[RMDB]
RNA sequence: GGGAACGACUCGAGUAGAGUCGAAAACGACAUGUGUCCAUCCAACAAUUGUUGGAUCGUCAAAAUAGGUUAGUUCAUAAUUGGAACGAAUUUGCUGGCGAAUUUUCAGUAAAAUGAUCAAUGUUUAUAAAUACUGGGGUUUCGACCCCAGUAUUUAAAAAGAAACAACAACAACAAC
Reactivity to DMS in 0.01 (KOAc 150mM, MgCl2 10mM, bicine 150mM(pH8.5), 24C), signal-to-noise 1, nucleotides 027 to 126: c090g000a040c060a070u010g010u000g020u010c060c090a120u000c000c010a020a030c010a300a210u010u010g010u010u010g000g000a070u000c040g020u000c010a010a060a140a140u010a060g010g010u000u010a070g010u000u000c010a070u000a080a120u000u020g030g010a110a020c030g000a010a090u000u000u020g020c120u000g010g010c220g010a070a090u000u010u000u010c030a040g010u000a040a100a110a150u010g010a130u000c130a090a020u000g000u000u000u010a060